[RMDB]
RNA sequence: GGGAACGACUCGAGUAGAGUCGAAAAAAGAUGGCUAAGCAGGUUAGGGAUAUCAUAAUUGAUUAUGGAAUCAUUUUUCUGAAUUUGCUUCCAAGCAAGUGACAUCUAUUUCCAAUGCUUUUGUCAUGGGUAGUCCUUUUGGGACAAAAUUCAUGUAACUAAAAUUAGUCUUCGGACUAAUUUUAGUAAAAGAAACAACAACAACAAC
Reactivity to DMS in 0.01 (KOAc 150mM, MgCl2 10mM, bicine 150mM(pH8.5), 24C), signal-to-noise 2, nucleotides 027 to 156: a070a110g010a030u000g000g010c010u010a080a040g060c010a120g010g000u000u000a030g000g020g020a040u000a030u020c040a050u000a060a210u000u030g010a100u000u000a150u000g000g000a070a030u020c030a050u010u000u000u010u020c080u020g000a060a040u000u000u000g000c080u000u010c070c020a090a100g010c030a010a080g000u000g010a030c010a010u000c020u000a100u000u000u000c000c030a090a160u000g030c030u000u000u000u010g020u020c020a050u000g020g010g020u000a230g010u000c000c000u010u000u010u020g020g030g020a040c020a030a030a040a080u000u010c050a060u000g030u000a130
Reactivity to 2A3 in 0.01 (KOAc 150mM, MgCl2 10mM, bicine 150mM(pH8.5), 24C), signal-to-noise 3, nucleotides 027 to 156: a000a010g140a030u050g010g010c020u030a010a010g020c010a010g030g030u030u060a050g000g010g050a010u060a020u060c030a010u030a300a120u140u050g090a070u070u160a120u230g040g000a020a000u020c020a030u030u020u030u090u150c070u070g110a160a050u030u000u000g000c000u040u000c020c010a020a020g030c020a050a010g030u030g040a010c010a010u000c010u040a080u010u060u010c010c000a050a080u060g020c000u020u080u170u150g040u040c000a000u010g000g000g110u050a060g020u020c010c000u040u150u170u230g070g010g000a020c000a020a140a010a000u060u060c030a030u070g060u120a060
The record gives the reactivity of an RNA of 207 nucleotides to DMS and 2A3. Source: RMDB library OK3TST, as collected in RNAgym. For 2A3 the reverse transcriptase was SuperScript II with manganese. For 2A3, 1,874 sequencing reads were counted. Conditions: 150 mM KOAc, 10 mM MgCl2 and 150 mM bicine (pH 8.5), 24 C.